The record gives the reactivity of an RNA of 177 nucleotides to 2A3 and DMS. It was measured as part of the RMDB library OK1LIB. The 2A3 profile rests on 1,533 reads. For DMS, 1,295 sequencing reads were counted.
[RMDB]
RNA sequence: GGGAACGACUCGAGUAGAGUCGAAAAGAAUGAAUAGUGGUGUCACGGCUCUGGAGCCGCUCCCGAGCCGCGGCUAACGCUAUCUGAAGGGCGGCUCACAAAUAGAAGCGAGAAGAAGACUCGCAGACGCAUUACUGAGGUUCGCCUCAGUAAUGCGAAAAGAAACAACAACAACAAC
Reactivity to 2A3 in 0.01 (KOAc 150mM, MgCl2 10mM, bicine 150mM(pH8.5), 24C), signal-to-noise 3, nucleotides 027 to 126: g090a000a140u190g030a000a020u040a010g090u060g110g070u080g000u070c000a000c020g000g000c000u000c010u040g000g060a030g100c150c090g050c030u010c000c010c000g010a000g000c030c000g000c000g020g010c030u080a100a070c000g020c000u010a010u000c000u010g100a070a080g020g010g000c000g000g010c020u050c000a090c000a020a090a010u240a050g100a270a020g030c000g010a020g010a200a000g060a030a080g090a100c000u000c000g000c020a000g030a020
Reactivity to DMS in 0.01 (KOAc 150mM, MgCl2 10mM, bicine 150mM(pH8.5), 24C), signal-to-noise 1, nucleotides 027 to 126: g000a070a020u010g000a120a050u010a000g010u010g000g000u000g000u000c000a040c050g000g010c000u000c000u000g000g020a020g060c050c080g060c010u000c000c030c070g000a000g000c000c000g000c140g000g030c000u040a060a100c000g070c010u000a030u000c040u030g000a150a050g000g000g020c000g000g030c020u060c070a060c180a060a070a130u020a100g010a170a090g000c020g000a000g020a070a220g040a220a230g040a060c000u000c020g060c000a010g000a100